[RMDB]
Annotation: This 177-nucleotide RNA was probed chemically with DMS and 2A3. For 2A3, 6,968 sequencing reads were counted. For 2A3 the reverse transcriptase was SuperScript II with manganese. The RNA was probed in 150 mM KOAc, 10 mM MgCl2 and 150 mM bicine (pH 8.5) at 24 C.
RNA sequence: GGGAACGACUCGAGUAGAGUCGAAAAAGAAGACGCUGGACAAGUGACUGUGGAACACCUUAUCUCUGUACCGAAGACUGGCGAGUCAGAAGUGUACAUUCACCUCAGAGACAGGCCUUGCAGUAUCGUAUUUACUGGUCUUCGGACCAGUAAAUACAAAAGAAACAACAACAACAAC
Reactivity to DMS in 0.01 (KOAc 150mM, MgCl2 10mM, bicine 150mM(pH8.5), 24C), signal-to-noise 4, nucleotides 027 to 126: a060g050a080a100g000a100c040g010c010u020g000g010a110c150a060a070g000u010g030a050c060u000g010u030g010g010a090a090c130a090c060c070u000u010a140u020c000u010c060u000g020u000a070c040c020g000a200a110g010a040c020u000g020g000c080g000a100g040u000c020a070g010a090a080g000u010g010u010a050c110a060u010u020c050a020c030c020u020c060a050g000a070g000a070c160a070g010g000c060c020u000u010g000c040a020g000u020a080u010c160
Reactivity to 2A3 in 0.01 (KOAc 150mM, MgCl2 10mM, bicine 150mM(pH8.5), 24C), signal-to-noise 8, nucleotides 027 to 126: a000g090a040a010g070a010c040g000c060u050g030g030a020c040a110a050g040u060g090a030c040u050g020u060g070g030a080a030c020a030c040c020u070u110a120u090c040u000c020u040g040u050a060c030c010g030a100a020g020a050c030u030g050g060c060g060a030g030u020c010a010g030a110a020g090u080g020u100a060c030a080u040u140c040a050c010c020u030c030a010g040a010g010a080c010a030g040g030c010c010u050u080g000c030a030g040u080a050u190c070
Values are in units of 0.01, from 0 to 300, in steps of 10. For DMS the reverse transcriptase was MarathonRT.